Background: Chemical mapping of a 207-nucleotide RNA with 2A3. It was measured as part of the RMDB library M2RFPK. The 2A3 profile rests on 687 reads.
[RMDB]
RNA sequence: GGGAACGACUCGAGUAGAGUCGAAAAAGUCACCUAUUACGAUAGGAGACAUUUGAACCAGCGAACAAUUCAGUUGCGAGAUUCGAGGUUUCAGUCUGAAUCAUAGUAGCCAUUACGAUGGCUACAACUCACUCCCGACUGUUCGCAGUCGGGAGAAGGAAACCUAAGUCUUCGGACUUAGGUUUCCAAAAGAAACAACAACAACAAC
Reactivity to 2A3 in 0.01 (KOAc 150mM, MgCl2 10mM, bicine 150mM(pH8.5), 24C), signal-to-noise 1, nucleotides 027 to 156: a000g020u020c020a020c010c000u010a000u030u060a040c140g020a020u010a030g010g000a030g010a000c020a030u130u080u100g070a040a010c010c000a040g140c000g010a000a020c010a060a110u020u000c000a000g010u000u000g020c000g000a000g000a010u010u000c000g000a000g060g000u110u230u300c040a020g060u050c000u000g040a000a030u010c030a010u020a140g010u000a000g000c000c000a000u040u020a050c240g160a020u000g000g000c000u000a000c000a000a030c020u070c040a020c040u010c000c000c000g000a000c000u020g060u050u120c240g000c120a000g000u000c000g000g010g000a000g000a000a000